[RMDB]
RNA sequence: GGGAACGACUCGAGUAGAGUCGAAAAUAACACUGGCGGCUGCGUAUCACUCUAGGGUACGUGAUAGUGCGAUAUAAGAAGCACUGGUACAUGCCUGCAGGGACAGUUAAGAGAUGGCCGCAGUCUCAAAAGGGGUCAUUCUUCGGAAUGACCCCAAGACCUAUCACUGAUUCGUCAGUGAUAGGUCAAAAGAAACAACAACAACAAC
Reactivity to DMS in 0.01 (KOAc 150mM, MgCl2 10mM, bicine 150mM(pH8.5), 24C), signal-to-noise 2, nucleotides 027 to 156: u000a090a120c060a100c070u000g040g010c000g010g000c000u000g020c020g010u000a080u010c020a170c010u000c070u000a280g020g000g020u000a010c050g010u000g000a050u000a020g020u000g010c000g020a150u000a200u000a170a170g000a180a300g000c000a020c000u000g010g000u000a060c060a110u010g020c000c000u000g030c060a080g020g020g000a100c090a070g000u000u010a110a130g010a130g010a090u000g040g010c090c000g010c010a070g000u000c010u000c030a010a030a120a170g020g020g010g030u000c000a030u000u000c010u000u020c290g020g000a080a010u000g000a010c020c020c000c020a000a020
Reactivity to 2A3 in 0.01 (KOAc 150mM, MgCl2 10mM, bicine 150mM(pH8.5), 24C), signal-to-noise 1, nucleotides 027 to 156: u180a050a040c020a000c060u080g220g010c030g090g000c000u000g020c020g030u050a010u180c020a000c090u040c050u010a030g010g000g000u040a000c010g000u000g030a020u030a000g000u000g000c000g020a070u070a060u070a200a130g070a130a000g000c000a000c000u010g000g000u010a030c030a020u170g010c000c000u050g030c100a080g080g010g040a000c040a040g070u020u080a050a000g070a000g000a090u080g010g000c050c000g000c000a000g020u000c000u000c080a020a080a010a010g000g000g000g000u000c010a000u010u000c010u000u060c070g050g020a000a000u000g020a000c000c000c000c000a000a000